[RMDB]
RNA sequence: GGGAACGACUCGAGUAGAGUCGAAAAACAACAAGCCCAGGUAGCCCAGACCUUCAAGGCUACGGUGCGUUGCGACGCACGGUCUGAUUCUUCACAACGACGUUCACCGCGUCUUCUUCCAUCCCCCUCCAGCGCACGAAGUUCGCUUCGUGCGCAAGCUAUUACUGAAGUUCGCUUCAGUAAUAGCAAAAGAAACAACAACAACAAC
Reactivity to DMS in 0.01 (KOAc 150mM, MgCl2 10mM, bicine 150mM(pH8.5), 24C), signal-to-noise 2, nucleotides 027 to 156: a060c030a090a150c090a070a130g000c010c000c020a080g040g000u000a030g000c010c010c120a160g020a090c000c010u000u000c070a080a210g000g000c000u010a020c040g000g020u000g000c020g030u000u000g030c110g010a140c040g030c010a040c030g020g000u010c020u000g000a110u000u000c070u000u000c020a110c080a110a100c040g030a080c020g010u000u000c100a080c110c040g000c040g000u000c020u000u000c040u000u000c040c020a090u000c010c020c010c030c000u000c000c030a140g030c000g000c000a000c030g020a030a010g010u000u010c290g000c010u000u000c010g010u000g040c000g030c000a010a010
Reactivity to 2A3 in 0.01 (KOAc 150mM, MgCl2 10mM, bicine 150mM(pH8.5), 24C), signal-to-noise 2, nucleotides 027 to 156: a010c090a010a020c050a100a000g030c010c010c010a000g030g000u000a000g000c010c040c080a020g010a000c020c000u010u000c010a000a000g010g010c000u000a000c000g010g010u000g000c010g000u000u080g050c130g120a000c010g010c000a000c000g000g000u000c000u010g020a050u120u070c080u110u130c080a050c040a270a040c090g040a020c020g090u230u250c090a030c100c050g030c000g020u000c020u060u010c020u070u020c070c000a140u120c010c020c010c000c010u000c030c010a010g020c000g000c010a010c010g000a010a000g000u030u070c070g080c060u000u000c000g010u000g000c000g000c000a000a000